[RMDB]
RNA sequence: GGGAACGACUCGAGUAGAGUCGAAAAGAUGCAGCACGUAUCACUGGUGAAAACACUUGGAAUAUCAUAUGGCGUUAUAUUUUACCGAAUGCGAUUGCGCCUAUGAUUGUACGUUUUUCAUUAAAUACCUCUGCUAAGAGUUCGCUCUUAGCAGAGGAAAAGAAACAACAACAACAAC
Reactivity to 2A3 in 0.01 (KOAc 150mM, MgCl2 10mM, bicine 150mM(pH8.5), 24C), signal-to-noise 6, nucleotides 027 to 126: g040a020u080g040c040a030g030c020a030c100g040u050a010u040c010a000c030u040g000g000u020g020a050a010a020a010c140a030c060u090u160g070g050a150a030u060a000u090c000a000u010a050u280g000g000c020g020u120u010a100u050a090u140u160u090u130a170c090c090g120a170a060u230g090c060g100a080u040u120g000c000g020c000c000u000a000u010g000a000u010u040g020u040a030c040g020u000u000u030u000u040c030a030u020u050a040a070a030u110a090
Reactivity to DMS in 0.01 (KOAc 150mM, MgCl2 10mM, bicine 150mM(pH8.5), 24C), signal-to-noise 3, nucleotides 027 to 126: g000a010u000g000c010a030g030c110a020c140g010u000a020u010c030a040c000u020g000g000u000g000a030a020a020a050c100a100c050u020u020g020g010a200a040u020a000u010c000a000u000a020u020g010g000c000g060u000u010a070u020a030u000u010u000u060a140c160c150g000a060a080u000g010c160g020a070u000u030g000c000g020c000c020u010a010u000g000a010u000u000g000u010a040c120g000u000u010u000u000u000c010a050u000u030a020a070a100u030a130